RNA sequence: GGGAACGACUCGAGUAGAGUCGAAAAGAUGAGCAGGCAGAUAAUCUUGUGCAGUAUGCAUGCUCGUAACUCCAGCGCACAAGUGGAGGCACAAGAUUUUAAUCCAGCAUAGCGCAGGAGCCGCAGACACGUAGUCCGUGUUCGCACGGACUACGUGAAAAGAAACAACAACAACAAC
Reactivity to DMS in 0.01 (KOAc 150mM, MgCl2 10mM, bicine 150mM(pH8.5), 24C), signal-to-noise 2, nucleotides 027 to 126: g010a070u030g000a000g000c040a000g020g020c000a080g020a180u020a060a050u000c000u000u010g040u020g000c010a110g000u000a120u000g030c050a030u000g040c010u000c020g000u000a120a070c000u000c000c000a050g030c030g070c020a100c080a100a190g000u000g000g030a060g010g020c050a020c020a040a000g040a160u000u000u000u070a040a180u040c030c030a120g000c150a180u000a060g000c060g010c000a050g030g000a020g000c040c060g020c150a130g000a160
Reactivity to 2A3 in 0.01 (KOAc 150mM, MgCl2 10mM, bicine 150mM(pH8.5), 24C), signal-to-noise 2, nucleotides 027 to 126: g100a070u160g030a000g000c010a000g080g000c010a100g040a170u100a070a000u000c000u000u000g000u000g040c080a100g060u180a020u010g050c010a010u030g020c010u020c020g010u020a060a030c000u000c000c010a010g040c000g020c030a040c040a160a190g150u050g020g030a020g000g030c000a000c000a060a000g020a020u000u060u130u180a050a010u020c000c010a030g030c010a120u180a100g010c060g000c000a050g000g000a010g000c000c010g040c040a000g010a040

Structure probing data (DMS and 2A3) for a 177-nucleotide construct. For DMS, 2,226 sequencing reads were counted. It was measured as part of the RMDB library OK1LIB. DMS (dimethyl sulfate) methylates the pairing face of unpaired adenines and cytosines.